[RMDB]
RNA sequence: GGGAACGACUCGAGUAGAGUCGAAAAUAACCAUGGUAAACUAUGGCUAAUAUAGUGGAUGAGUGGGUGACCUAUCAGCUUGACGGUACGGUAAGUGCGUACCGAGGCUAUAACGGGUAACGGGGAAAUGAUAGCCCAAUUUCGAUUGGGCUAUCAUAAAAGAAACAACAACAACAAC
Reactivity to DMS in 0.01 (KOAc 150mM, MgCl2 10mM, bicine 150mM(pH8.5), 24C), signal-to-noise 8, nucleotides 027 to 126: u020a110a150c000c010a030u000g010g010u060a060a150a120c050u000a000u000g010g010c090u010a070a110u020a090u000a100g010u010g000g000a100u030g000a130g000u030g000g000g000u020g010a090c050c040u000a060u020c180a020g000c010u000u010g000a160c020g010g010u010a000c000g010g010u020a100a150g020u060g010c000g020u000a010c000c000g010a030g000g000c000u010a080u010a060a090c170g000g000g000u010a070a090c130g010g000g000g000a080a100
Reactivity to 2A3 in 0.01 (KOAc 150mM, MgCl2 10mM, bicine 150mM(pH8.5), 24C), signal-to-noise 7, nucleotides 027 to 126: u110a020a020c010c000a010u020g030g030u140a100a070a120c020u020a040u010g000g020c020u020a060a080u160a110u050a090g070u110g050g030a120u120g070a060g040u200g040g010g020u070g140a030c010c000u030a060u090c040a010g010c000u050u090g130a080c000g000g000u000a000c010g030g060u110a180a100g140u150g260c010g000u000a000c000c000g000a010g000g000c000u020a010u040a140a040c090g000g000g000u020a050a040c060g010g000g000g010a020a080
An RNA of 177 nucleotides, treated with DMS and 2A3 and read out base by base. Values are in units of 0.01, from 0 to 300, in steps of 10. The RNA was probed in 150 mM KOAc, 10 mM MgCl2 and 150 mM bicine (pH 8.5) at 24 C.